[RMDB]
RNA sequence: GGGAACGACUCGAGUAGAGUCGAAAACCCUUAUACCCACAUGGCGCAACGUGGGCACCAGUAACUCCUAUGCUAUAAUACCUGCUCUUCGAGAUCCCAGUCUAACUAUGAUCAUCGCCCGACGGGGCGAGAUAGUCGUGGGUUCCCUUUCUGGAGGCCAACCAAUAACGUUCGCGUUAUUGGUUGGAAAAGAAACAACAACAACAAC
Reactivity to 2A3 in 0.01 (KOAc 150mM, MgCl2 10mM, bicine 150mM(pH8.5), 24C), signal-to-noise 3, nucleotides 027 to 156: c000c000c000u020u240a280u090a040c010c010c010a030c000a080u120g140g000c070g000c090a050a110c060g020u030g020g010g000c010a050c000c040a060g070u040a020a080c020u010c000c000u040a040u130g020c020u070a040u090a300a040u060a110c020c030u030g060c000u010c020u080u060c030g030a020g010a050u030c010c000c000a020g060u030c040u070a050a060c020u020a070u160g050a040u100c010a010u020c030g020c000c000c000g100a140c130g020g020g000g020c010g000a010g000a000u050a030g040u030c030g050u080g020g010g000u000u010c020c000c000u040u070u050c040u010g040g030a020g080g010
Reactivity to DMS in 0.01 (KOAc 150mM, MgCl2 10mM, bicine 150mM(pH8.5), 24C), signal-to-noise 1, nucleotides 027 to 156: c020c010c040u010u000a070u010a040c010c000c020a050c030a130u000g010g040c040g030c070a100a060c140g000u000g000g030g010c040a050c050c090a130g010u010a110a090c000u000c040c010u000a040u000g030c040u000a110u000a100a080u000a090c100c030u000g000c030u000c030u000u000c040g010a070g000a080u000c000c000c020a200g020u020c030u000a040a060c030u000a060u000g000a150u000c010a060u000c000g030c000c000c000g040a150c100g040g000g020g010c000g030a010g010a040u000a050g030u000c040g030u010g000g020g010u010u010c000c000c000u000u000u000c010u000g020g010a160g070g050
The data come from the RNA Mapping Database (RMDB), library ARCHII. An RNA of 207 nucleotides, treated with 2A3 and DMS and read out base by base. Reactivities are given for positions 27 through 156. For 2A3 the reverse transcriptase was SuperScript II with manganese. The reactions ran in a buffer of 150 mM KOAc, 10 mM MgCl2 and 150 mM bicine (pH 8.5), at 24 C.